The record gives the reactivity of an RNA of 170 nucleotides to DMS and 2A3. For 2A3 the reverse transcriptase was SuperScript II with manganese. The RNA was probed in 150 mM KOAc, 10 mM MgCl2 and 150 mM bicine (pH 8.5) at 24 C. Values are in units of 0.01, from 0 to 300, in steps of 10.

RNA sequence: GGGAACGACUCGAGUAGAGUCGAAAAGAGGGUACGAGUGAGGCUUAUCCCGGGGAACUCGGCGAAUCGUCCCCACAUAGCAGUUCCCAGGACCCCCUUCUAAAAUGACCGAGAGGGGGUGCUAGGAUUAUGCUUCCUUUCGAGGAAGCAAAAAGAAACAACAACAACAAC
Reactivity to DMS in 0.01 (KOAc 150mM, MgCl2 10mM, bicine 150mM(pH8.5), 24C), signal-to-noise 4, nucleotides 027 to 129: g000a050g000g010g010u040a070c020g010a010g020u040g010a050g010g000c020u030u050a070u000c100c000c040g000g020g000g010a010a020c000u020c000g050g000c030g000a050a090u010c040g000u030c000c010c010c100a020c150a060u000a070g000c080a100g030u030u010c000c000c010a060g000g000a030c000c000c000c000c000u000u070c070u000a070a040a070a080u060g000a090c160c070g030a070g020a030g000g000g000g000g000u030g010c000u030a050g000g000a070u050u040a080
Reactivity to 2A3 in 0.01 (KOAc 150mM, MgCl2 10mM, bicine 150mM(pH8.5), 24C), signal-to-noise 5, nucleotides 027 to 129: g050a030g010g010g040u100a010c010g010a030g020u110g020a040g070g000c010u050u070a060u070c000c000c030g000g020g000g000a030a010c020u000c020g010g000c020g030a020a060u030c010g010u020c010c000c010c000a030c020a010u150a000g060c060a010g070u030u000c000c000c000a000g000g020a010c000c000c000c010c000u010u080c020u050a070a100a110a130u190g060a080c070c060g040a050g020a010g070g000g000g030g000u020g000c000u010a010g010g000a020u080u110a070